[RMDB]
RNA sequence: GGGAACGACUCGAGUAGAGUCGAAAAAAUAAUUGGCGAAACUCGUUUCGCGUUGGCUGCCUAAUUCAAGGAAUUAGCGUGCCUUCAUGCUAAGGGUUUGAUAUCUGCUAAAACCCGGUCCAUUCAUAAGACUUUUGCUUGUUCGCAAGCAAAAGAAGAACCAAACAAUCUUCGGAUUGUUUGGUUCAAAAGAAACAACAACAACAAC
Reactivity to 2A3 in 0.01 (KOAc 150mM, MgCl2 10mM, bicine 150mM(pH8.5), 24C), signal-to-noise 2, nucleotides 027 to 156: a050a040u280a020a040u090u070g010g010c000g000a070a040a040c020u050c070g040u010u040u020c030g010c020g000u040u000g010g000c020u070g030c050c020u000a010a000u020u010c160a240a140g190g050a050a010u000u000a000g010c040g060u040g000c020c000u020u060c090a070u110g030c030u060a020a090g030g020g020u020u040u000g040a040u070a100u150c150u250g070c030u070a040a010a030a040c010c000c000g000g000u000c030c000a060u050u110c050a040u090a160a120g050a140c000u000u020u000u000g000c000u000u030g020u080u060c100g000c100a000a000g000c000a000a000a000a000g000a010a010
Reactivity to DMS in 0.01 (KOAc 150mM, MgCl2 10mM, bicine 150mM(pH8.5), 24C), signal-to-noise 1, nucleotides 027 to 156: a120a150u000a110a090u010u000g030g010c010g000a220a090a020c020u010c160g020u000u020u000c040g060c050g020u020u000g010g040c030u000g020c210c000u000a040a000u010u000c020a200a150g000g020a010a100u010u000a040g040c050g050u000g010c020c010u000u000c060a100u000g000c070u010a090a210g000g000g030u000u010u000g020a110u000a090u010c070u000g000c080u000a130a020a020a070c000c010c000g010g000u000c030c020a090u000u000c070a160u000a050a150g010a110c010u000u010u000u020g010c010u000u000g000u000u000c300g040c010a000a040g010c020a000a000a000a050g010a110a100
Conditions: 150 mM KOAc, 10 mM MgCl2 and 150 mM bicine (pH 8.5), 24 C.
The record gives the reactivity of an RNA of 207 nucleotides to 2A3 and DMS.
For 2A3, 1,348 sequencing reads were counted.
It was measured as part of the RMDB library M2RFPK.
Values cover nucleotides 27 to 156.